[RMDB]
RNA sequence: GGGAACGACUCGAGUAGAGUCGAAAAGUUUUGACCAUGGCAAUACAAACACAGUAUAACAUAGAUGAAUUACGAGCCACAAACAUUGUGCAAAAAUGUUACCAGUGGUUAAGAGUAACGACUGUGCGUCUUAUGGACGGUUCGCCGUCCAUAAGACAAAAGAAACAACAACAACAAC
Reactivity to 2A3 in 0.01 (KOAc 150mM, MgCl2 10mM, bicine 150mM(pH8.5), 24C), signal-to-noise 1, nucleotides 027 to 126: g030u050u040u020u140g060a060c040c020a090u060g010g000c060a060a080u050a130c050a040a250a000c000a000c000a010g030u050a060u070a250a020c090a010u110a060g150a100u150g120a170a050u030u060a020c040g030a040g030c000c000a010c010a000a000a020c010a000u020u040g000u050g060c070a000a110a100a000a100u040g000u070u050a120c080c060a070g020u010g020g000u030u050a060a040g040a030g100u030a060a000c020g040a000c010u020g020u060g080c040
Reactivity to DMS in 0.01 (KOAc 150mM, MgCl2 10mM, bicine 150mM(pH8.5), 24C), signal-to-noise 2, nucleotides 027 to 126: g000u010u000u000u000g000a150c000c060a140u030g030g000c110a080a170u000a000c160a090a170a170c050a090c050a010g000u000a080u010a030a120c160a090u010a080g000a110u000g000a100a110u010u000a040c090g000a120g010c000c010a020c010a040a000a010c050a000u000u000g010u000g000c300a030a060a040a040a020u000g000u000u010a030c110c150a110g000u020g000g030u000u000a070a140g030a140g010u030a020a080c090g000a050c010u000g030u000g000c050